[RMDB]
RNA sequence: GGGAACGACUCGAGUAGAGUCGAAAACUACCAUGGUGGCAACGGGUGAGCACGUUGCCCUGUAGGACGCAAGACCGUCGGGCGCGUCGCGGCGGCACCGGCGACACGCUGGCUCAGAUGAGGUCUCCGGGGCCGACUCUCGGUACGCCACGGGAGCCUACGCGUUCUUGUUCGCAAGAACGCGUAGAAAAGAAACAACAACAACAAC
Reactivity to 2A3 in 0.01 (KOAc 150mM, MgCl2 10mM, bicine 150mM(pH8.5), 24C), signal-to-noise 3, nucleotides 027 to 156: c030u150a140c000c020a120u210g120g060u170g020g000c060a080a000c000g000g000g070u180g110a080g120c030a010c070g020u070u300g010c020c000c000u010g000u000a090g070g030a030c040g060c210a180a090g010a140c000c000g180u300c090g050g000g000c010g000c010g030u010c110g010c010g020g020c040g010g000c010a000c000c000g000g000c000g000a000c020a020c030g030c010u110g080g290c080u130c180a030g090a300u080g030a100g090g050u000c030u010c010c000g010g020g000g000c030c000g120a150c000u010c000u000c070g020g020u120a030c070g000c010c000a000c010g000g000g000a040g030c010

Record summary
An RNA of 207 nucleotides, treated with 2A3 and read out base by base. Reactivities are given for positions 27 through 156. Reactivities are rounded to 0.1 and cut off at 0 and 3. For 2A3, 1,237 sequencing reads were counted.